[RMDB]
RNA sequence: GGGAACGACUCGAGUAGAGUCGAAAAAGCGCUGCUUGUAAAACAGCAACAAAAAUAACUGUAAACAACACAGAUUACGCUCCAGCUUACGCUAAAGCUGCGUGAGUUAAUCUCCUUUUGGAGCUGGACUGAUUAGAAUUUCUAGCGUUUUAAUCGCCAUACCACGGGAGUUCGCUCCCGUGGUAUGAAAAGAAACAACAACAACAAC
Reactivity to 2A3 in 0.01 (KOAc 150mM, MgCl2 10mM, bicine 150mM(pH8.5), 24C), signal-to-noise 1, nucleotides 027 to 156: a000g000c030g000c080u020g000c060u130u110g090u100a090a040a010a060c000a010g000c000a000a030c060a030a050a000a040a060u140a000a000c010u020g040u060a010a100a130c050a020a020c000a000c010a010g020a030u030u090a040c020g000c060u000c010c000a000g000c000u030u010a000c000g000c000u060a180a160a000g110c210u130g000c000g000u010g000a000g010u000u010a000a060u040c020u040c060c000u040u060u090u060g000g000a000g000c000u010g010g050a020c030u030g010a020u030u030a010g040a160a040u030u070u060c070u080a070g010c030g010u000u000u000u110a000a120u000c020g000c000